Background
The record gives the reactivity of an RNA of 177 nucleotides to 2A3. Source: RMDB library OK1LIB, as collected in RNAgym. The reactions ran in a buffer of 150 mM KOAc, 10 mM MgCl2 and 150 mM bicine (pH 8.5), at 24 C. 2A3 adducts were read by reverse transcription with SuperScript II with manganese.

RNA sequence: GGGAACGACUCGAGUAGAGUCGAAAACAGGUUCGGUCGGCGACGCGCCACUGACCUUUGCCGGUGCACGUGGUGUCAAGGCAAAGGCCAUCUUCGCCACAAAGUACGAAGGCAACGCCAUCAUCGUCGAUAGCGCCCAUUUCGAUGGGCGCUAUCGAAAAGAAACAACAACAACAAC
Reactivity to 2A3 in 0.01 (KOAc 150mM, MgCl2 10mM, bicine 150mM(pH8.5), 24C), signal-to-noise 2, nucleotides 027 to 126: c060a010g000g120u130u140c000g000g000u030c060g080g080c030g030a080c100g000c010g000c090c000a080c070u070g010a030c040c000u060u000u050g030c000c040g040g090u180g000c060a000c050g240u200g000g070u030g030u140c070a070a060g000g000c000a000a000a070g000g030c060c000a010u070c010u130u060c000g020c000c000a020c050a000a230a010g080u050a050c030g050a050a000g030g000c040a090a080c000g040c050c000a040u080c000a010u030c070g080u000